[RMDB]
RNA sequence: GGGAACGACUCGAGUAGAGUCGAAAAUCCUAAGUCAUCGCUACAGCUCCUAAGACAGUUGUAGGGAGUGCUUCGGAAACGAAGCACAUCGAUCUACAAUCGAGGAGCUGGUCGAUGAUAUGGAAAAGGUUAACGCACCUUCGGGUGCGUUAACCAACUGCUCUACAAGGUUCGCCUUGUAGAGCAGAAAAGAAACAACAACAACAAC
Reactivity to 2A3 in 0.01 (KOAc 150mM, MgCl2 10mM, bicine 150mM(pH8.5), 24C), signal-to-noise 4, nucleotides 027 to 156: u020c000c000u020a090a020g020u000c000a000u000c000g030c100u300a300c040a010g000c010u020c020c000u130a210a080g040a160c130a080g030u020u010g010u000a010g020g020g000a010g000u000g000c000u000u010c010g020g030a030a110a030c010g000a000a000g130c000a000c000a060u150c010g070a080u010c000u010a010c000a030a020u090c030g040a020g000g000a010g000c000u000g000g010u000c000g000a000u010g000a000u010a100u110g070g040a040a100a070a100g000g010u000u000a000a010c000g000c000a000c000c000u020u070c300g040g000g000u000g000c000g000u000u010a000a010c000c000a000a000
Reactivity to DMS in 0.01 (KOAc 150mM, MgCl2 10mM, bicine 150mM(pH8.5), 24C), signal-to-noise 1, nucleotides 027 to 156: u010c000c000u000a090a180g020u000c000a050u000c000g050c020u000a060c020a030g010c000u000c000c000u000a250a260g020a190c300a100g020u010u020g080u010a020g010g000g000a060g020u000g000c010u000u000c000g020g000a100a190a250c000g030a050a020g000c000a000c020a030u000c100g000a020u010c000u000a000c020a050a060u000c030g070a050g010g060a100g030c020u000g000g020u020c220g000a000u000g020a040u000a190u010g010g000a040a100a220a100g000g010u000u010a000a000c000g010c040a030c010c010u000u020c300g060g000g000u000g000c040g020u000u000a010a000c010c000a010a020